This 177-nucleotide RNA was probed chemically with 2A3 and DMS.
The reactions ran in a buffer of 150 mM KOAc, 10 mM MgCl2 and 150 mM bicine (pH 8.5), at 24 C.

RNA sequence: GGGAACGACUCGAGUAGAGUCGAAAAUGAUCGAGAGAUCUAACGAUGUACGCGAGUCAAUGGCACAGACUCGAGCGAAAGCUCGGUCGAAAGACCGCGUACAUCGGUCGGCAAGUGUAUAGUCAAAAGCUAUACUGAGGUUCGCCUCAGUAUAGCUAAAAGAAACAACAACAACAAC
Reactivity to 2A3 in 0.01 (KOAc 150mM, MgCl2 10mM, bicine 150mM(pH8.5), 24C), signal-to-noise 1, nucleotides 027 to 126: u080g010a020u020c020g000a010g000a010g010a040u000c000u030a050a030c020g000a000u000g000u010a000c000g000c010g020a040g000u000c070a060a090u060g120g000c090a090c030a170g000a030c010u050c180g000a000g010c010g020a100a020a010g000c000u000c010g000g010u010c020g020a030a010a010g010a000c000c010g010c030g010u010a000c000a010u010c000g000g000u010c010g000g000c040a100a140g030u080g030u140a090u150a150g100u100c030a000a010a090
Reactivity to DMS in 0.01 (KOAc 150mM, MgCl2 10mM, bicine 150mM(pH8.5), 24C), signal-to-noise 4, nucleotides 027 to 126: u010g010a000u000c010g000a270g000a240g010a000u000c010u000a100a110c010g000a020u010g020u000a010c000g010c000g020a080g010u000c010a030a070u000g000g000c090a050c170a160g010a000c000u000c020g010a000g010c010g000a100a100a160g000c000u010c000g010g010u000c000g000a090a080a160g000a010c000c000g000c000g000u000a000c020a000u000c000g010g030u000c090g000g000c040a040a070g010u000g010u000a070u010a100g000u000c080a070a060a150